[RMDB]
Description: The record gives the reactivity of an RNA of 177 nucleotides to DMS and 2A3. The data come from the RNA Mapping Database (RMDB), library TTRDEL. The reactions ran in a buffer of 150 mM KOAc, 10 mM MgCl2 and 150 mM bicine (pH 8.5), at 24 C. Reactivities are rounded to 0.1 and cut off at 0 and 3. The DMS profile rests on 2,950 reads. 2A3 adducts were read by reverse transcription with SuperScript II with manganese.
RNA sequence: GGGAACGACUCGAGUAGAGUCGAAAAGAUAUGGACCAUCCACCCAGCCGCAGAUAUCGGAAACGAUGUAGGCUGUGGUGGAGUGGUCCUAAGUCAAAAGGAAUCGUUGGUUCGCCAACGAUUCCAAGAGUUACAAGGUGUUCGCACCUUGUAACUCAAAAGAAACAACAACAACAAC
Reactivity to DMS in 0.01 (KOAc 150mM, MgCl2 10mM, bicine 150mM(pH8.5), 24C), signal-to-noise 3, nucleotides 027 to 126: g000a030u000a300u000g000g000a000c000c000a050u000c000c000a000c000c000c010a010g020c010c000g040c240a140g020a040u000a010u000c000g010g000a160a100a240c010g010a000u000g000u000a110g020g010c000u000g020u020g030g010u000g000g000a010g010u000g020g010u010c000c000u010a010a030g000u000c070a070a070a120a120g000g000a000a000u000c000g010u000u000g000g000u010u010c240g010c000c000a000a010c000g000a000u000u000c000c000a020a020
Reactivity to 2A3 in 0.01 (KOAc 150mM, MgCl2 10mM, bicine 150mM(pH8.5), 24C), signal-to-noise 2, nucleotides 027 to 126: g040a020u070a040u140g020g000a000c000c010a030u030c000c010a000c000c010c000a000g000c000c020g050c210a040g080a300u120a020u080c020g050g050a070a060a050c010g000a010u030g010u100a130g010g000c000u020g050u140g000g050u000g000g000a000g000u010g000g000u000c000c000u000a000a010g020u020c020a000a000a040a190g030g000a010a000u020c010g000u000u000g030g030u020u120c250g060c110c010a000a000c010g010a000u000u000c000c000a000a000